Record summary:
The record gives the reactivity of an RNA of 177 nucleotides to 2A3 and DMS. For 2A3 the reverse transcriptase was SuperScript II with manganese. Values are in units of 0.01, from 0 to 300, in steps of 10.
RNA sequence: GGGAACGACUCGAGUAGAGUCGAAAAUGAAAUAGCGUAAUCGACAUUGAGAAUGUACGCUAAGUGUGUGUUGUAUCGGUAAGGUCCAAUUGAACACACACACAGUUGGACCUAAUGUCGAAAAAAAUCAACAUGGAAUCUUCGGAUUCCAUGUUGAAAAAGAAACAACAACAACAAC
Reactivity to 2A3 in 0.01 (KOAc 150mM, MgCl2 10mM, bicine 150mM(pH8.5), 24C), signal-to-noise 1, nucleotides 027 to 126: u250g020a070a000a070u060a000g010c050g000u050a000a040u060c030g070a020c070a110u110u160g040a070g050a180a090u130g060u120a000c000g000c010u030a040a040g050u000g020u010g000u020g010u020u050g000u050a150u100c030g070g000u060a060a060g030g000u010c020c030a030a000u050u040g140a190a000c050a020c000a000c010a010c000a000c000a120g030u000u010g000g000a010c000c000u020a050a040u060g020u000c000g000a010a000a000a000a000a000a000
Reactivity to DMS in 0.01 (KOAc 150mM, MgCl2 10mM, bicine 150mM(pH8.5), 24C), signal-to-noise 2, nucleotides 027 to 126: u000g000a090a130a090u010a060g030c020g020u000a050a040u000c040g000a060c030a080u010u050g020a080g010a150a090u000g020u000a010c020g000c030u010a020a170g000u000g010u000g000u000g010u030u000g020u000a130u000c020g000g000u010a050a060g010g000u010c060c010a030a090u010u000g020a060a010c050a050c150a040c120a020c100a010c090a110g050u000u000g010g000a090c020c010u000a010a070u000g010u010c000g010a000a010a000a010a070a110a090